[RMDB]
Conditions: 150 mM KOAc, 10 mM MgCl2 and 150 mM bicine (pH 8.5), 24 C. An RNA of 177 nucleotides, treated with DMS and 2A3 and read out base by base.
RNA sequence: GGGAACGACUCGAGUAGAGUCGAAAAGGGGUUGAUAGCUCGGGAGCGGCGCAGGUGCAGAGCGGAGCUGCGCGCCAGCUGAUGCAGCGGCUUCAGGCAGCCUACGCCGACAUGUGGCAGCUGCAGCACGCAUGGUUCAAUUCGUUGAACCAUGCGUAAAAGAAACAACAACAACAAC
Reactivity to DMS in 0.01 (KOAc 150mM, MgCl2 10mM, bicine 150mM(pH8.5), 24C), signal-to-noise 3, nucleotides 027 to 126: g010g000g000g020u010u010g000a140u010a070g010c030u000c080g010g010g020a120g020c050g010g000c030g040c040a010g000g020u010g020c100a090g000a150g030c120g010g000a090g020c020u000g000c010g020c100g010c050c090a100g020c120u010g010a110u000g010c010a130g030c020g010g010c010u000u000c070a090g020g020c030a180g010c030c040u000a040c120g010c000c010g020a030c100a080u010g010u010g020g000c050a050g000c010u000g000c030a060g000c130
Reactivity to 2A3 in 0.01 (KOAc 150mM, MgCl2 10mM, bicine 150mM(pH8.5), 24C), signal-to-noise 1, nucleotides 027 to 126: g020g000g000g020u070u050g020a110u080a080g010c030u010c000g010g020g030a210g070c030g050g000c010g030c030a010g000g040u050g000c080a020g040a020g170c000g030g000a030g020c010u010g020c030g010c020g000c030c020a100g090c080u070g000a150u120g000c010a030g010c000g050g010c060u030u050c020a070g180g040c000a020g090c030c010u000a030c010g030c000c030g040a090c030a130u200g030u060g100g000c040a020g000c020u030g000c020a010g040c010

2A3 adducts were read by reverse transcription with SuperScript II with manganese. The 2A3 profile rests on 1,643 reads. DMS adducts were read by reverse transcription with MarathonRT. Values cover nucleotides 27 to 126.